RNA sequence: GGGAACGACUCGAGUAGAGUCGAAAACUACACGCUGCCUGUGGGGUGCCCUGUGCCAGGAAUGGCCACUGGCCGACACAAGUUCCCGCGUGUGUUACUAGCCAUAGGGCCCUUUGAACCGAGCUCGUGUUAAAAUUGACUUCGGUCAAUUUUAACAAAAAGAAACAACAACAACAAC
Reactivity to 2A3 in 0.01 (KOAc 150mM, MgCl2 10mM, bicine 150mM(pH8.5), 24C), signal-to-noise 4, nucleotides 027 to 126: c020u050a020c020a010c050g040c030u050g020c000c010u030g020u070g030g010g000g080u160g020c000c000c000u040g050u080g010c000c010a030g040g110a130a110u080g040g010c010c020a080c040u050g000g000c000c000g060a020c010a000c010a060a040g020u060u070c000c010c010g010c030g000u060g000u000g010u020u030a090c080u080a030g030c010c010a060u110a060g000g000g040c000c010c000u070u050u100g060a050a030c020c010g010a010g010c010u020c050g040
Reactivity to DMS in 0.01 (KOAc 150mM, MgCl2 10mM, bicine 150mM(pH8.5), 24C), signal-to-noise 5, nucleotides 027 to 126: c050u010a050c060a060c050g020c030u010g000c060c000u000g030u010g000g020g000g020u030g010c020c010c120u000g010u020g010c020c020a030g010g040a130a080u010g000g000c010c070a080c100u020g000g030c020c070g010a070c030a020c040a090a090g010u000u010c020c020c020g010c100g010u040g000u000g010u000u000a020c060u020a120g010c050c060a070u020a080g000g000g000c010c020c020u010u040u020g030a110a120c070c020g000a100g000c030u010c080g040
This 177-nucleotide RNA was probed chemically with 2A3 and DMS.
For 2A3, 11,623 sequencing reads were counted.
Reactivities are given for positions 27 through 126.
For DMS the reverse transcriptase was MarathonRT.